[RMDB]
RNA sequence: GGGAACGACUCGAGUAGAGUCGAAAAGAUAUGGACUCAGACCCAACGACGGUACGCGAUGAAACCUCUUAUAAUCGGAAACGAUUAUAAGAGGUGGAGCGUACCCAAGUUGCUGAGUCCUAAGUCAGAUAUCAUUCCCCUUCGGGGGAAUGAUAUCAAAAGAAACAACAACAACAAC
Reactivity to DMS in 0.01 (KOAc 150mM, MgCl2 10mM, bicine 150mM(pH8.5), 24C), signal-to-noise 1, nucleotides 027 to 126: g000a070u000a300u000g000g000a010c000u020c000a030g000a300c210c300c090a000a030c000g000a300c300g020g010u000a000c000g000c020g000a040u030g000a210a140a020c000c000u000c000u000u000a000u000a000a000u000c000g030g000a130a140a270c000g030a020u000u000a000u000a000a040g000a010g020g010u010g000g010a000g000c000g000u000a020c000c000c000a000a300g000u000u000g020c050u000g000a020g000u000c000c010u000a000a090g000u000c020a120